An RNA of 177 nucleotides, treated with 2A3 and DMS and read out base by base. Reactivities are rounded to 0.1 and cut off at 0 and 3. The RNA was probed in 150 mM KOAc, 10 mM MgCl2 and 150 mM bicine (pH 8.5) at 24 C. It was measured as part of the RMDB library OK2TRN.
[RMDB]
RNA sequence: GGGAACGACUCGAGUAGAGUCGAAAAACGUUCAAAAAAUGUCUGAGAACUUCCGAGUGAUGCUUGAUUUCGUAGCCAAUCAUAUGUCGAAAUCAAGUGAUUGGUUCAAGCGAUUCUCCGAUAACGAAAUGCCGUACGUAUUCGUACGUACGGCAUUAAAAGAAACAACAACAACAAC
Reactivity to 2A3 in 0.01 (KOAc 150mM, MgCl2 10mM, bicine 150mM(pH8.5), 24C), signal-to-noise 2, nucleotides 027 to 126: a000c000g060u000u100c050a050a000a000a020a090a170u180g020u000c020u040g020a010g000a120a060c040u090u020c070c050g020a040g060u080g020a080u190g010c020u010u000g010a050u100u080u130c060g060u120a010g060c050c010a030a060u040c020a030u140a080u210g070u110c040g100a000a010a030u110c040a030a070g000u000g000a040u010u010g010g010u080u070c050a030a010g010c010g050a080u010u000c000u080c000c020g030a040u040a080a070c060g040a070
Reactivity to DMS in 0.01 (KOAc 150mM, MgCl2 10mM, bicine 150mM(pH8.5), 24C), signal-to-noise 2, nucleotides 027 to 126: a120c160g000u000u000c050a000a040a060a070a120a120u010g020u000c050u000g010a110g000a110a030c050u000u010c060c040g020a060g010u000g010a060u000g000c000u000u010g000a040u000u000u000c040g040u010a090g000c170c070a070a050u000c210a100u010a060u010g020u000c050g010a060a070a010u020c000a010a300g020u000g000a030u000u020g030g000u000u000c020a020a070g010c080g000a140u000u000c020u000c010c100g000a030u000a000a040c130g010a070
About this RNA: For 2A3 the reverse transcriptase was SuperScript II with manganese. DMS adducts were read by reverse transcription with MarathonRT.